The record gives the reactivity of an RNA of 177 nucleotides to 2A3 and DMS. It was measured as part of the RMDB library OK2TRN. 2A3 adducts were read by reverse transcription with SuperScript II with manganese. The DMS profile rests on 2,402 reads. The 2A3 profile rests on 1,777 reads. Reactivities are given for positions 27 through 126. The RNA was probed in 150 mM KOAc, 10 mM MgCl2 and 150 mM bicine (pH 8.5) at 24 C.
RNA sequence: GGGAACGACUCGAGUAGAGUCGAAAAGAUCUGGAGUAUAAGAACAACCAUGUCACCACUCUAGAGUUGACCUCUUCUUCUACAGGAGCUCCGCUACUAUGGAAUGAUACAUCCGUUAAAGAGUGGCACUAUGCCUUACCUUCGGGUAAGGCAUAGUAAAAGAAACAACAACAACAAC
Reactivity to 2A3 in 0.01 (KOAc 150mM, MgCl2 10mM, bicine 150mM(pH8.5), 24C), signal-to-noise 2, nucleotides 027 to 126: g020a070u020c030u070g030g060a040g040u120a110u070a300a140g080a130a050c020a030a090c100c110a100u080g020u030c040a020c050c000a010c040u000c000u010a020g020a050g110u050u100g090a050c020c030u080c030u000u020c030u060u010c020u090a080c050a040g020g020a010g040c000u000c050c010g000c020u030a070c000u020a080u090g020g050a130a060u050g070a050u130a140c060a070u000c040c000g000u060u090a100a060a010g110a010g000u030g020g000c000
Reactivity to DMS in 0.01 (KOAc 150mM, MgCl2 10mM, bicine 150mM(pH8.5), 24C), signal-to-noise 3, nucleotides 027 to 126: g000a040u000c060u000g020g020a110g010u010a080u000a090a090g010a130a060c060a060a080c140c140a080u000g010u000c040a100c080c040a020c010u000c040u010a050g000a060g000u010u000g010a120c130c060u010c050u000u010c050u000u000c090u000a050c110a030g010g000a050g000c110u000c060c060g020c040u010a060c060u000a050u000g000g000a040a050u010g000a120u010a090c170a090u000c050c060g000u000u000a050a100a060g010a060g030u000g000g010c190